[RMDB]
RNA sequence: GGGAACGACUCGAGUAGAGUCGAAAAGAUAUGGAGAAGUCCGAUAAGCUUUCAUUCGGAAACGAAUGAAAGCUUUUGACGGACCUCCUAAGUCAAACUUGCCCAAUUGUUCGCAAUUGGGCAAGAAUCAAGUGUUAUUCUUCGGAAUAACACUUGAAAAAGAAACAACAACAACAAC
Reactivity to 2A3 in 0.01 (KOAc 150mM, MgCl2 10mM, bicine 150mM(pH8.5), 24C), signal-to-noise 1, nucleotides 027 to 126: g000a010u050a060u050g040g020a000g010a300a040g080u000c020c020g020a050u030a150a000g010c020u020u070u020c000a020u000u010c010g030g000a150a050a020c000g000a030a020u000g010a020a010a010g010c020u000u000u000u030g010a020c030g020g020a000c000c000u000c010c000u020a150a040g040u040c050a060a090a150c010u000u000g020c050c000c000a010a000u020u020g050u030u120c300g000c130a000a000u000u000g010g000g170c020a000a000g000a000a010
Reactivity to DMS in 0.01 (KOAc 150mM, MgCl2 10mM, bicine 150mM(pH8.5), 24C), signal-to-noise 4, nucleotides 027 to 126: g010a040u010a300u010g000g000a010g010a120a150g020u000c000c000g020a140u000a020a020g010c000u000u000u000c000a020u000u000c010g010g000a110a090a190c010g010a010a000u000g000a000a000a000g000c000u000u000u000u000g010a200c040g000g000a010c020c010u000c000c000u010a020a130g000u010c030a130a090a210c010u000u000g010c000c000c000a000a020u000u000g010u000u010c260g020c010a010a000u000u000g000g000g010c000a000a000g000a030a090